Chemical mapping of a 177-nucleotide RNA with 2A3 and DMS. Reactivities are given for positions 27 through 126. The 2A3 profile rests on 1,350 reads. As a SHAPE reagent, 2A3 marks flexible, mostly unpaired nucleotides at the ribose 2'-OH. The data come from the RNA Mapping Database (RMDB), library RFMREP.
RNA sequence: GGGAACGACUCGAGUAGAGUCGAAAAAAUGGACGUCCGAGAUUCGUCCACGUCACCAUGAGUUAAAAUUUAACUCGCAGAUUCACUCCUGAGUUAAACUUUUACUGGGAGUUAAAUUUUAACUCAUUACCAAGCUUAAGUUCGCUUAAGCUUGGUAAAAAGAAACAACAACAACAAC
Reactivity to 2A3 in 0.01 (KOAc 150mM, MgCl2 10mM, bicine 150mM(pH8.5), 24C), signal-to-noise 2, nucleotides 027 to 126: a010a020u020g000g000a020c020g020u040c080c080g130a060g020a230u090u150c020g000u030c020c000a010c080g020u010c000a130c250c010a030u010g010a010g020u000u020a000a020a000a020u000u030u020a000a000c010u020c010g060c050a000g060a160u130u100c030a010c080u110c030c040u110g060a000g080u070u070a110a180a070c030u110u060u100u300a080c000u020g070g020g000a000g000u000u010a000a010a000u020u000u000u000a000a000c000u000c010a000u000
Reactivity to DMS in 0.01 (KOAc 150mM, MgCl2 10mM, bicine 150mM(pH8.5), 24C), signal-to-noise 1, nucleotides 027 to 126: a060a060u000g010g020a010c010g010u020c080c100g020a150g020a170u010u010c020g010u000c000c000a010c060g000u000c050a170c000c000a050u010g000a010g000u000u000a000a010a020a020u000u000u000a000a000c000u000c000g010c030a020g000a180u010u000c200a070c090u000c180c160u000g000a030g000u010u010a070a130a230c120u020u000u000u010a100c020u000g010g000g010a000g010u010u000a010a000a010u010u000u010u000a000a000c000u000c020a020u000